The record gives the reactivity of an RNA of 177 nucleotides to DMS and 2A3. The data come from the RNA Mapping Database (RMDB), library OK2TRN. Reactivities are rounded to 0.1 and cut off at 0 and 3. For DMS the reverse transcriptase was MarathonRT.

[RMDB]
RNA sequence: GGGAACGACUCGAGUAGAGUCGAAAACUGUGAGUACCUCGAAAUACAUGUUAUGUAUGGGCUAUGAAUAUUGCGUAUGAGAACGACUGCGAAGCCUCGAGAACGUGAUAUACUAUCAUCUAGAUGGACUAAGCUUACUAUUCGUAGUAAGCUUAGUAAAAGAAACAACAACAACAAC
Reactivity to DMS in 0.01 (KOAc 150mM, MgCl2 10mM, bicine 150mM(pH8.5), 24C), signal-to-noise 9, nucleotides 027 to 126: c050u000g020u000g010a120g020u000a100c060c020u000c070g010a070a120a040u000a020c020a030u000g010u010u010a060u000g010u000a020u000g000g000g010c120u000a070u010g010a090a050u000a040u000u000g010c030g010u000a060u010g010a200g010a080a110c130g010a080c040u000g010c210g010a120a070g010c060c010u000c040g010a160g010a070a030c040g020u000g000a030u000a040u000a110c070u000a050u000c040a070u010c140u000a100g010a080u000g000g000
Reactivity to 2A3 in 0.01 (KOAc 150mM, MgCl2 10mM, bicine 150mM(pH8.5), 24C), signal-to-noise 9, nucleotides 027 to 126: c020u050g040u100g180a040g040u070a100c000c020u020c050g040a050a080a010u060a010c020a030u090g120u300u300a080u060g030u050a030u050g030g020g000c060u080a080u220g100a120a030u120a050u070u110g020c020g010u050a030u200g040a040g020a110a030c050g080a060c050u060g030c070g050a070a020g020c010c000u010c020g060a070g020a070a010c020g020u020g040a000u010a000u010a100c050u050a040u070c040a020u040c050u120a080g020a140u060g030g000